[RMDB]
Chemical mapping of a 177-nucleotide RNA with DMS and 2A3. The RNA was probed in 150 mM KOAc, 10 mM MgCl2 and 150 mM bicine (pH 8.5) at 24 C. DMS adducts were read by reverse transcription with MarathonRT. It was measured as part of the RMDB library OK2TRN. Values cover nucleotides 27 to 126. 2A3 adducts were read by reverse transcription with SuperScript II with manganese.
RNA sequence: GGGAACGACUCGAGUAGAGUCGAAAAUUCGUUCUGGUAUUCACCUGAUUUACAUGGUACCUGGUAUGGGGAUUGCACGGGGCAAUGGAACCCUGGUUCACAUGGCAUGGACGUGCCAACUUUGUCACGAUUAGCGUGGAUUCGUCCACGCUAAUCGAAAAGAAACAACAACAACAAC
Reactivity to DMS in 0.01 (KOAc 150mM, MgCl2 10mM, bicine 150mM(pH8.5), 24C), signal-to-noise 2, nucleotides 027 to 126: u010u020c070g020u010u000c030u000g010g010u000a080u000u000c100a030c080c050u010g000a120u020u010u010a090c110a070u010g000g000u010a090c060c030u010g020g020u000a060u010g000g000g010g000a060u000u010g030c070a090c100g020g010g000g020c030a100a100u000g020g000a070a070c020c010c050u000g010g010u000u000c040a090c080a100u000g000g010c020a030u000g000g020a090c120g010u000g020c040c030a030a120c090u020u010u010g020u000c090a160
Reactivity to 2A3 in 0.01 (KOAc 150mM, MgCl2 10mM, bicine 150mM(pH8.5), 24C), signal-to-noise 1, nucleotides 027 to 126: u020u040c010g000u070u000c030u020g040g030u030a120u060u230c070a070c050c010u020g030a070u110u090u130a110c040a040u070g020g040u040a050c020c010u070g040g030u150a080u120g000g010g010g020a050u030u170g000c060a020c130g000g000g000g000c040a030a120u130g060g040a050a020c010c000c000u040g070g010u010u010c040a050c010a090u070g000g000c020a050u040g000g100a020c020g020u030g000c000c000a030a040c050u140u080u060g100u060c060a030